[RMDB]
RNA sequence: GGGAACGACUCGAGUAGAGUCGAAAAUAAGUCUGAACCAAAUCCAGCUUCCGUUACAACGAUAUCAGCUAAAUCACGUGCUGUUUCAGUUGCUAAAAUUGAGUUACAACCGUGUGCGAUAUUCGCACCCGUUCUUGAGGUUCGCCUCAAGAACGGGAAAAGAAACAACAACAACAAC
Reactivity to DMS in 0.01 (KOAc 150mM, MgCl2 10mM, bicine 150mM(pH8.5), 24C), signal-to-noise 2, nucleotides 027 to 126: u020a080a060g020u020c030u010g000a130a090c080c110a080a050a190u010c090c020a040g010c000u000u000c060c060g040u000u010a060c070a070a100c010g000a060u000a010u000c000a120g010c030u030a020a060a160u020c120a040c130g010u020g030c040u000g010u000u000u000c040a050g020u010u010g000c120u010a080a060a010a070u000u000g000a070g020u000u000a050c040a030a040c010c020g000u000g000u000g040c050g000a030u010a070u000u000c010g000c040a110
Reactivity to 2A3 in 0.01 (KOAc 150mM, MgCl2 10mM, bicine 150mM(pH8.5), 24C), signal-to-noise 2, nucleotides 027 to 126: u140a010a010g020u040c010u010g010a030a020c080c000a070a040a070u030c010c000a020g030c030u050u040c040c000g110u090u120a070c060a090a020c050g040a020u030a030u100c040a030g010c030u060a100a120a050u150c040a040c100g070u100g010c020u010g000u010u030u020c020a020g000u030u040g000c070u070a060a030a000a150u050u090g030a040g090u150u070a060c040a040a010c040c010g030u040g010u010g020c010g010a010u010a090u120u120c040g000c010a020